[RMDB]
RNA sequence: GGGAACGACUCGAGUAGAGUCGAAAAUGGCCAAUCAGGUUCAAACGGCACUGGAGGCCAAGCAGGCUCAAGCGGAGCAGGGGGUCAAAGAGACAAAGACGUUGACGCUGGCUCAACAGGGAAGAUACUUGUAUAGUCUAUUCGUAGACUAUACAAGAAAAGAAACAACAACAACAAC
Reactivity to 2A3 in 0.01 (KOAc 150mM, MgCl2 10mM, bicine 150mM(pH8.5), 24C), signal-to-noise 9, nucleotides 027 to 126: u060g020g000c020c000a040a140u130c030a040g060g000u140u110c040a140a170a090c090g050g000c070a050c160u040g030g020a040g030g000c000c000a000a010g020c030a010g050g010c010u040c070a060a060g020c030g040g010a020g000c020a060g030g000g000g020g010u020c000a040a070a040g100a030g000a030c060a030a110a000g060a020c060g030u040u050g010a020c030g010c100u060g040g010c020u010c040a020a060c030a050g040g040g010a040a020g030a060u110a120
Reactivity to DMS in 0.01 (KOAc 150mM, MgCl2 10mM, bicine 150mM(pH8.5), 24C), signal-to-noise 9, nucleotides 027 to 126: u020g000g000c000c020a100a140u030c050a030g000g010u010u000c080a070a110a120c240g000g000c050a070c020u010g000g000a240g000g000c020c020a040a110g010c060a090g010g010c020u000c060a090a100g010c090g000g000a070g010c040a060g000g000g000g000g000u010c040a030a080a100g020a130g000a080c140a060a100a080g010a070c100g010u000u010g010a070c080g000c040u010g010g000c060u010c060a050a060c080a080g000g000g000a070a050g000a100u030a100
This 177-nucleotide RNA was probed chemically with 2A3 and DMS. Conditions: 150 mM KOAc, 10 mM MgCl2 and 150 mM bicine (pH 8.5), 24 C. Source: RMDB library OK1LIB, as collected in RNAgym. For 2A3, 20,010 sequencing reads were counted.